[RMDB]
RNA sequence: GGGAACGACUCGAGUAGAGUCGAAAAAAUGCAACUUUUCUACAAAUACAAUUGUAAUUAAGGUUAUGCGUCACAUAACUUAUUGCUUAUACAAAUUCAAAUCAAAGCGACGUACCUCAUAUUGAUACUAAUUAGUCGCAUUCGUGCGACUAAUUAGAAAAGAAACAACAACAACAAC
Reactivity to 2A3 in 0.01 (KOAc 150mM, MgCl2 10mM, bicine 150mM(pH8.5), 24C), signal-to-noise 2, nucleotides 027 to 126: a000a000u150g000c030a040a020c010u100u030u030u060c080u020a040c000a060a060a070u200a070c030a040a210u090u030g020u000a060a170u130u060a040a020g020g000u010u020a060u080g050c010g110u060c030a030c020a110u070a090a020c000u110u130a020u090u060g000c010u080u060a060u040a180c040a050a090a170u070u050c020a130a080a010u090c060a080a080a020g020c010g020a030c030g040u040a070c030c010u000c020a060u190a060u120u080g030a020u040a130
Reactivity to DMS in 0.01 (KOAc 150mM, MgCl2 10mM, bicine 150mM(pH8.5), 24C), signal-to-noise 1, nucleotides 027 to 126: a010a000u000g000c040a100a080c060u000u000u000u000c010u000a070c030a030a110a150u020a150c300a070a110u000u000g000u000a020a050u010u010a060a070g020g000u000u010a050u000g000c080g000u020c120a110c070a030u000a020a000c040u000u000a070u020u030g010c070u000u000a070u020a070c090a080a060a070u010u000c120a040a050a040u000c030a090a090a090g000c080g020a020c070g030u000a080c050c030u000c100a100u000a110u000u000g000a160u000a100
Chemical mapping of a 177-nucleotide RNA with 2A3 and DMS. For DMS, 746 sequencing reads were counted. It was measured as part of the RMDB library OK2TST.